RNA sequence: GGGAACGACUCGAGUAGAGUCGAAAACAUGGCCGCAACCGUGCAUGCGGCCCUCGAUGGUGGAGCGAUGCGCGAAGCGGUUGUGCUCGGGCAUCGGCAAGGCGUCCAUGUCCGCGCGCAGCCCGAACGUCGAUCCGCGAUUCGUCGCGGAUCGACGAAAAGAAACAACAACAACAAC
Reactivity to 2A3 in 0.01 (KOAc 150mM, MgCl2 10mM, bicine 150mM(pH8.5), 24C), signal-to-noise 1, nucleotides 027 to 126: c030a090u180g030g000c000c000g000c020a030a080c090c000g170u080g020c020a010u100g290c000g090g020c000c000c030u000c040g140a150u200g090g010u080g010g040a090g080c070g020a040u030g020c020g030c030g030a020a000g070c090g000g010u000u000g000u010g010c020u020c000g010g020g030c000a060u070c140g000g030c070a120a160g300g020c080g040u000c000c000a000u010g000u000c020c000g000c000g000c010g000c020a010g010c000c000c010g020a050a010
Chemical mapping of a 177-nucleotide RNA with 2A3. 2A3 adducts were read by reverse transcription with SuperScript II with manganese. Source: RMDB library OK2TST, as collected in RNAgym. Values cover nucleotides 27 to 126.